[RMDB]
RNA sequence: GGGAACGACUCGAGUAGAGUCGAAAAGUGGAUAGUUUCGACUAUCCACACAACUGAUGAUCUUACAGUGGAGGAUGAAGAAGAUGGCCAUCGGAUCCACAAAUAGCACAGAGUUCGCUCUGUGCAAAUAACACUAGCAAUUCGUUGCUAGUGUUAUAAAAGAAACAACAACAACAAC
Reactivity to DMS in 0.01 (KOAc 150mM, MgCl2 10mM, bicine 150mM(pH8.5), 24C), signal-to-noise 9, nucleotides 027 to 126: g020u000g000g000a010u000a000g010u000u000u020c160g020a040c000u000a000u000c000c000a000c010a030c140a080a100c070u000g010a070u010g010a100u010c040u000u000a110c120a080g010u010g000g010a070g010g010a070u000g010a090a110g010a080a080g020a080u000g010g010c080c010a030u000c020g020g000a140u000c010c030a050c110a070a080a080u000a110g010c000a010c000a010g000a020g010u000u010c240g010c010u000c000u000g010u000g000c000a010a030
Reactivity to 2A3 in 0.01 (KOAc 150mM, MgCl2 10mM, bicine 150mM(pH8.5), 24C), signal-to-noise 9, nucleotides 027 to 126: g010u010g000g000a000u010a010g010u020u050u120c170g040a010c010u000a000u010c000c000a000c000a000c000a010a020c030u130g050a100u070g020a050u120c030u060u190a090c080a090g020u040g050g040a030g040g010a030u060g040a040a140g050a070a030g090a140u130g080g030c030c000a020u020c020g030g100a030u000c010c010a030c010a040a110a080u170a030g000c010a000c000a000g010a000g010u050u070c150g060c070u000c000u000g000u000g000c000a000a000

Source: RMDB library M2PK50, as collected in RNAgym. Chemical mapping of a 177-nucleotide RNA with DMS and 2A3. Values cover nucleotides 27 to 126. Conditions: 150 mM KOAc, 10 mM MgCl2 and 150 mM bicine (pH 8.5), 24 C.